Notes
This 177-nucleotide RNA was probed chemically with DMS and 2A3. The reactions ran in a buffer of 150 mM KOAc, 10 mM MgCl2 and 150 mM bicine (pH 8.5), at 24 C. For DMS the reverse transcriptase was MarathonRT.

[RMDB]
RNA sequence: GGGAACGACUCGAGUAGAGUCGAAAAAUCCAGUACAUUUCACCACAUUGUCUGCAGCUCACCUCGCAGGAAUCACUUCGGUGAGCGAGGGCUGUUCGACUCCACGCGGAAAUGUCGAAGGAUGAUGCAUUCUGAUUAGCUUCGGCUAAUCAGAAUGAAAAGAAACAACAACAACAAC
Reactivity to DMS in 0.01 (KOAc 150mM, MgCl2 10mM, bicine 150mM(pH8.5), 24C), signal-to-noise 3, nucleotides 027 to 126: a070u010c000c000a070g020u030a020c030a020u000u010u000c040a150c030c050a070c170a080u000u000g020u000c010u010g030c000a030g030c030u020c140a300c050c000u000c010g000c010a190g000g020a080a170u000c110a060c050u000u000c160g000g020u000g000a020g030c020g000a030g010g000g000c010u000g000u010u010c300g000a010c000u000c220c060a120c180g020c140g010g000a010a030a000u000g000u010c010g020a190a110g000g000a030u000g000a140u000g000
Reactivity to 2A3 in 0.01 (KOAc 150mM, MgCl2 10mM, bicine 150mM(pH8.5), 24C), signal-to-noise 1, nucleotides 027 to 126: a000u020c000c000a000g030u110a010c000a020u010u050u010c150a170c040c020a050c040a110u030u100g010u010c000u010g000c000a000g000c010u070c100a140c010c000u020c000g060c030a100g030g280a070a070u070c020a030c030u020u070c120g070g000u010g000a020g000c010g000a010g000g000g000c000u010g010u040u030c020g000a010c000u000c000c010a140c100g140c070g070g010a020a000a000u020g030u000c020g040a160a090g000g000a040u050g020a030u140g070